[RMDB]
RNA sequence: GGGAACGACUCGAGUAGAGUCGAAAACAGGGUGUCGAGGUUGUUAAAGAGCUGUGGAAAGCGUGAGGCUAGAAAUAGAGCAGCGAAAAGCAGCCGCUUGAAGUGGUGUUGCGGAUAGCUGGCUUGAGAGAUUCGCCUUGGCUUGCCACGUCGAGUACUUACUUGUGAAGUUCGCUUCACAAGUAAGAAAAGAAACAACAACAACAAC
Reactivity to 2A3 in 0.01 (KOAc 150mM, MgCl2 10mM, bicine 150mM(pH8.5), 24C), signal-to-noise 7, nucleotides 027 to 156: c040a020g040g050g050u080g060u120c070g050a050g090g000u010u020g010u020u040a060a080a030g090a050g020c180u130g000u010g020g020a040a010a010g020c090g100u100g020a010g000g020c030u050a050g030a020a050a020u080a020g020a000g000c020a000g000c010g070a060a020a020a020g000c000a000g010c000c010g040c050u140u270g170a290a050g020u020g020g010u090g080u240u130g010c020g000g030a040u060a040g000c000u050g200g070c010u020u060g030a060g000a000g020a110u050u060c030g000c000c000u010u010g010g000c000u000u010g020c000c000a010c010g020u030c010g010a010g010u000a020
Reactivity to DMS in 0.01 (KOAc 150mM, MgCl2 10mM, bicine 150mM(pH8.5), 24C), signal-to-noise 1, nucleotides 027 to 156: c050a110g000g010g070u000g000u000c010g000a130g010g010u000u010g030u000u020a060a060a110g020a130g010c080u050g060u000g040g000a020a020a050g010c060g060u010g010a110g040g040c040u030a100g010a080a120a100u030a300g010a110g040c010a040g000c000g000a060a010a130a300g020c000a180g010c010c000g040c010u000u000g010a120a150g080u000g020g050u000g030u020u000g020c020g090g010a260u000a070g000c040u010g020g030c010u010u000g020a130g000a140g010a270u000u000c190g040c060c010u000u020g060g000c010u000u010g000c000c080a120c130g000u000c010g020a110g000u000a040